[RMDB]
RNA sequence: GGGAACGACUCGAGUAGAGUCGAAAAUGGAUGUGGCGAUCCCCGUCGAAGAAGUGGCUGCCGUUCAUCGGCAUCCGAGCGAGACAUGACUGCAGCCGUGACAGAUCGCGACAAUCGAUAUCCGGGGAACAGCGUGGAGACGCUUGAUUACGUCGUGUACGAAUCAGAGAUUCGUCUCUGAUUCGUAAAAAGAAACAACAACAACAAC
Reactivity to DMS in 0.01 (KOAc 150mM, MgCl2 10mM, bicine 150mM(pH8.5), 24C), signal-to-noise 3, nucleotides 027 to 156: u000g030g010a050u000g040u010g000g030c020g000a080u010c010c030c030c060g040u000c070g020a120a130g040a140a230g030u010g010g010c030u000g010c000c020g010u010u010c100a080u000c070g020g020c050a050u010c030c050g000a140g010c060g000a140g020a110c070a090u000g010a060c030u000g000c040a080g030c010c000g020u010g000a190c060a100g000a050u000c020g040c030g020a090c040a090a070u000c040g010a100u010a100u000c020c010g000g000g010g050a100a080c070a060g000c030g050u010g040g010a200g020a040c020g020c030u000u010g010a200u010u010a060c040g000u000c010g020u010g010
Reactivity to 2A3 in 0.01 (KOAc 150mM, MgCl2 10mM, bicine 150mM(pH8.5), 24C), signal-to-noise 7, nucleotides 027 to 156: u080g060g020a020u020g010u040g110g020c020g030a020u020c020c040c060c070g010u050c040g070a220a180g090a110a020g120u100g070g000c000u010g000c010c010g080u160u100c030a070u070c080g080g010c110a040u020c030c060g020a040g050c120g020a040g010a030c030a030u040g010a010c000u010g000c000a000g000c000c010g040u040g010a020c010a020g050a030u020c020g000c020g030a020c030a030a140u070c010g040a020u020a040u070c030c000g010g020g000g000a030a070c040a020g010c020g010u030g030g050a060g020a030c020g010c010u080u100g040a100u140u150a060c090g000u050c030g030u080g050

Source: RMDB library OK3TST, as collected in RNAgym. An RNA of 207 nucleotides, treated with DMS and 2A3 and read out base by base. Reactivities are given for positions 27 through 156. For 2A3 the reverse transcriptase was SuperScript II with manganese.